An RNA of 207 nucleotides, treated with 2A3 and read out base by base. The data come from the RNA Mapping Database (RMDB), library M2RFPK. The RNA was probed in 150 mM KOAc, 10 mM MgCl2 and 150 mM bicine (pH 8.5) at 24 C.
RNA sequence: GGGAACGACUCGAGUAGAGUCGAAAACAAGAUCGGUGGUUAGCAGCCCUAUCAAUAUCUAGGAGAACUGUGCUAUGUUUAGAAGAUUAGGUAGUCUCUAAACAGAACAAUUUACCUGCUGAACAAAAAAAUCCAAUGGCGUUCGCGCCAUUGGAAACGGUAUUAGCUGGUUCGCCAGCUAAUACCGAAAAGAAACAACAACAACAAC
Reactivity to 2A3 in 0.01 (KOAc 150mM, MgCl2 10mM, bicine 150mM(pH8.5), 24C), signal-to-noise 1, nucleotides 027 to 156: c000a020a020g050a140u100c020g020g000u040g060g040u040u030a010g010c010a000g000c000c000c030u080a070u150c050a150a060u030a030u190c080u090a060g010g040a110g020a020a040c040u040g060u050g040c030u050a050u050g000u000u000u040a050g010a300a010g010a060u030u060a030g010g180u080a030g020u000c000u000c020u010a000a010a010c030a040g010a030a030c020a010a010u040u110u030a010c000c000u030g000c040u090g140a200a020c070a060a110a040a000a000a000a030u000c000c000a000a000u000g000g000c020g000u000u050c110g010c000g030c040c000a010u010u000g000g000a020a020a020